[RMDB]
RNA sequence: GGGAACGACUCGAGUAGAGUCGAAAAGAUGGCGGCGUGGAUAGCACUCUUCUUCAUGUGCUUCUACAUCUGCGCAUACGCGUGGUCGUGGGGGCCGCUGCCCUGGCUGUACGCUGCAGAAGUGCAGCAUUAAGCAAGUCUUCGGACUUGCUUAAUGAAAAGAAACAACAACAACAAC
Reactivity to 2A3 in 0.01 (KOAc 150mM, MgCl2 10mM, bicine 150mM(pH8.5), 24C), signal-to-noise 9, nucleotides 027 to 126: g110a050u200g010g010c010g010g000c050g020u050g040g040a080u140a120g000c010a020c020u080c070u300u070c040u180u150c110a140u190g010u020g020c000u020u010c010u020a020c010a050u020c010u040g000c020g000c020a030u110a300c130g000c020g040u070g030g030u100c120g040u140g000g020g010g050g000c010c000g000c010u030g000c000c010c000u010g070g000c010u010g020u070a030c050g020c070u090g020c030a030g030a300a020g110u020g020c000a000g000
Reactivity to DMS in 0.01 (KOAc 150mM, MgCl2 10mM, bicine 150mM(pH8.5), 24C), signal-to-noise 9, nucleotides 027 to 126: g010a090u010g000g010c010g010g010c040g020u000g000g000a050u010a030g010c010a020c010u010c230u010u010c200u000u010c160a100u010g010u000g010c000u000u000c010u000a020c020a110u000c020u000g010c010g010c040a150u010a070c180g010c020g030u000g010g010u010c100g010u000g000g010g010g010g010c020c020g010c030u000g010c010c010c010u000g010g000c050u000g010u000a050c100g010c060u000g010c050a040g000a100a110g010u000g000c000a020g010